[RMDB]
RNA sequence: GGGAACGACUCGAGUAGAGUCGAAAAACGCGCCGCGAGCCUCUUGAAGCGCAAUACGGUAUUCGCACCACCAGCGAUAACCUUGCUGCGGCGCAACAAGCGGAUGUGGUGGUGUUAGCGGUCAAAAUAAAAUGCUUUUAUUCGUAAAAGCAUUUUAAAAAGAAACAACAACAACAAC
Reactivity to DMS in 0.01 (KOAc 150mM, MgCl2 10mM, bicine 150mM(pH8.5), 24C), signal-to-noise 8, nucleotides 027 to 126: a090c100g020c040g030c000c010g040c020g020a290g010c020c050u010c070u000u010g010a100a170g020c080g020c040a090a070u000a060c120g010g010u000a180u010u000c090g010c010a090c040c020a050c080c040a080g010c010g010a030u000a180a080c100c020u010u000g010c070u000g010c100g020g020c050g010c010a020a040c060a040a070g020c070g000g000a110u010g020u000g000g020u000g000g010u000g000u000u010a050g010c050g000g010u010c070a060a050a070a120
Reactivity to 2A3 in 0.01 (KOAc 150mM, MgCl2 10mM, bicine 150mM(pH8.5), 24C), signal-to-noise 3, nucleotides 027 to 126: a000c030g000c000g000c010c000g010c040g080a030g040c030c010u080c050u090u140g080a100a020g020c010g000c070a010a020u130a070c060g000g000u030a060u010u140c020g000c040a140c050c010a020c000c000a020g030c010g030a030u040a070a100c000c000u020u070g020c040u060g000c010g100g000c030g000c010a000a010c000a000a000g050c050g030g040a060u100g060u050g070g010u030g030g020u010g020u020u080a030g000c040g000g030u040c030a120a010a030a000